Chemical mapping of a 177-nucleotide RNA with 2A3 and DMS. DMS adducts were read by reverse transcription with MarathonRT. It was measured as part of the RMDB libraries RFM100 and RFMREP. High 2A3 reactivity points to a flexible backbone, as in loops and unpaired stretches.
RNA sequence: GGGAACGACUCGAGUAGAGUCGAAAAAGUGUUUUUGGAUGGGGGUGUACUGGUCUCGACAGGGCGGACAAAGGUGCGCAGGCAACUCGUCAGGCGAUCGACGUUAAUGAAGCAAAUCCAUAAUUGCGACAUCUAUGUUAUUCGUAACAUAGAUGUCAAAAGAAACAACAACAACAAC
Reactivity to 2A3 in 0.01 (KOAc 150mM, MgCl2 10mM, bicine 150mM(pH8.5), 24C), signal-to-noise 8, nucleotides 027 to 126: a000g150u100g070u040u030u030u060u070g090g020a090u060g030g000g020g000g030u020g010u010a050c030u020g030g010u020c030u020c040g040a030c020a050g030g040g020c020g010g000a020c020a030a110a010g070g010u050g010c050g000c010a000g030g010c000a010a050c020u010c020g020u020c000a010g030g050c010g030a050u050c020g010a010c010g030u070u060a060a030u160g030a030a000g010c000a030a040a040u070c090c040a120u130a180a140u160u070g030c030
Reactivity to DMS in 0.01 (KOAc 150mM, MgCl2 10mM, bicine 150mM(pH8.5), 24C), signal-to-noise 8, nucleotides 027 to 126: a100g010u010g010u010u000u000u010u000g010g010a130u010g010g000g000g000g010u000g010u000a050c070u010g010g000u000c040u000c060g010a090c100a060g000g010g010c060g010g000a070c100a050a090a080g000g020u000g010c070g010c070a050g000g000c060a050a070c080u010c040g000u000c020a040g000g010c020g000a050u000c040g010a030c040g000u010u010a030a040u010g000a040a190g010c050a070a060a080u030c100c090a100u020a070a120u010u000g010c300